The data come from the RNA Mapping Database (RMDB), library OK1LIB. This 177-nucleotide RNA was probed chemically with 2A3 and DMS.
RNA sequence: GGGAACGACUCGAGUAGAGUCGAAAAUCAGGUUUUGCUACACGCGUACUGGAUGAUGCUAAAGCGGUAGGAUUCUUAGAAGCAGAAGGUGCUGAUCAGAUUGUGCGUCGUAGUACGUAUAUGCCUGGUCUUCGCUUUUGUUCGCAAAAGCGAAGACAAAAGAAACAACAACAACAAC
Reactivity to 2A3 in 0.01 (KOAc 150mM, MgCl2 10mM, bicine 150mM(pH8.5), 24C), signal-to-noise 3, nucleotides 027 to 126: u190c000a000g030g010u030u050u080u120g070c030u030a010c030a000c020g000c000g010u020a020c020u010g100g030a020u050g050a000u100g090c090u250a230a030a060g000c060g130g000u170a090g060g120a100u040u030c040u000u100a160g010a150a000g070c080a000g010a110a050g110g060u080g040c030u030g000a030u020c000a000g070a100u160u170g000u030g020c030g000u080c040g050u040a160g000u010a010c040g030u030a120u000a000u120g040c000c000u070g020
Reactivity to DMS in 0.01 (KOAc 150mM, MgCl2 10mM, bicine 150mM(pH8.5), 24C), signal-to-noise 1, nucleotides 027 to 126: u060c020a000g010g000u000u010u000u000g000c010u000a070c040a060c040g010c000g020u000a080c000u000g000g010a190u040g010a060u000g000c050u000a030a040a190g080c020g000g010u020a070g010g010a090u000u010c040u010u000a160g000a190a110g080c160a010g000a050a010g020g000u030g000c100u000g000a020u000c000a020g000a200u060u000g020u000g020c000g000u020c040g040u000a020g000u010a000c110g000u020a070u010a010u010g000c030c000u000g050
Values cover nucleotides 27 to 126.
For 2A3, 1,259 sequencing reads were counted.
The DMS profile rests on 2,255 reads.